[RMDB]
RNA sequence: GGGAACGACUCGAGUAGAGUCGAAAAGAUAUGGAUUCUGAUGACCACAGAGACGAUGAGUCGGAAACGACGAGUCUAUGUGCAAGGAAUCCUAAGUCAAACCCAAACCACUUCGGUGGUUUGGGAAUCUAUCUGUGCUGUUCGCAGCACAGAUAGAAAAAGAAACAACAACAACAAC
Reactivity to DMS in 0.01 (KOAc 150mM, MgCl2 10mM, bicine 150mM(pH8.5), 24C), signal-to-noise 2, nucleotides 027 to 126: g000a020u000a300u020g010g010a030u010u010c000u000g000a130u010g000a150c300c010a010c020a000g000a020g000a010c020g000a170u000g000a230g050u010c030g000g020a090a080a180c000g020a020c010g010a160g000u010c000u000a040u000g030u000g000c030a070a130g010g000a030a000u000c000c000u000a010a050g000u010c010a160a090a130c010c000c020a000a000a010c000c000a010c010u000u020c220g010g010u000g000g000u000u000u010g000g000g010a000a000
Reactivity to 2A3 in 0.01 (KOAc 150mM, MgCl2 10mM, bicine 150mM(pH8.5), 24C), signal-to-noise 2, nucleotides 027 to 126: g000a010u040a040u120g020g020a020u000u000c020u050g270a300u210g070a180c040c040a010c030a040g170a000g020a100c070g170a290u250g090a030g040u020c000g000g000a050a050a020c010g000a000c010g000a000g000u000c010u000a040u160g020u000g000c020a110a210g000g000a000a000u000c010c000u020a090a010g030u040c020a040a070a300c030c000c000a000a000a000c000c000a000c020u090u090c280g170g020u000g020g000u000u000u020g000g000g010a000a060
This 177-nucleotide RNA was probed chemically with DMS and 2A3. For 2A3, 2,289 sequencing reads were counted. The reactions ran in a buffer of 150 mM KOAc, 10 mM MgCl2 and 150 mM bicine (pH 8.5), at 24 C. The DMS profile rests on 1,129 reads. DMS adducts were read by reverse transcription with MarathonRT. 2A3 adducts were read by reverse transcription with SuperScript II with manganese.